[RMDB]
RNA sequence: GGGAACGACUCGAGUAGAGUCGAAAACUGCUAGCCCACACGUGCAUCUCAGGGAGCGCGGGCUAUACCACACGGUGGUGUAACUGCAGAAGCGACGGAGUGUCCUUGAGGCACUGGCCGUGUGCACGGAGGUCGGCUGGUUCGCCGGCCGACUUCCAAAAGAAACAACAACAACAAC
Reactivity to DMS in 0.01 (KOAc 150mM, MgCl2 10mM, bicine 150mM(pH8.5), 24C), signal-to-noise 7, nucleotides 027 to 126: c010u000g000c070u010a080g000c030c000c030a090c110a100c140g010u020g010c020a080u010c020u010c070a070g010g000g010a090g010c040g010c030g000g010g020c040u000a010u010a050c050c010a030c020a150c160g020g010u000g000g020u010g010u000a020a080c080u000g000c020a060g020a150a100g000c060g000a060c040g000g000a050g010u000g000u000c000c000u020u010g010a070g000g010c030a000c040u000g000g020c010c020g000u000g010u000g000c060a120c180
Reactivity to 2A3 in 0.01 (KOAc 150mM, MgCl2 10mM, bicine 150mM(pH8.5), 24C), signal-to-noise 5, nucleotides 027 to 126: c030u030g010c020u020a010g010c000c000c000a010c000a000c020g010u020g000c000a110u010c020u010c030a060g030g020g020a020g020c010g000c000g000g000g000c000u000a000u010a000c000c000a010c000a040c030g130g010u000g000g000u010g000u000a040a010c020u020g000c010a020g010a080a000g030c010g020a020c000g030g040a050g020u060g010u000c000c000u040u130g010a100g000g000c000a000c000u000g120g010c000c010g000u020g010u010g000c020a010c040
Source: RMDB library OK1LIB, as collected in RNAgym. This 177-nucleotide RNA was probed chemically with DMS and 2A3. For DMS, 23,926 sequencing reads were counted. The RNA was probed in 150 mM KOAc, 10 mM MgCl2 and 150 mM bicine (pH 8.5) at 24 C. The 2A3 profile rests on 23,017 reads.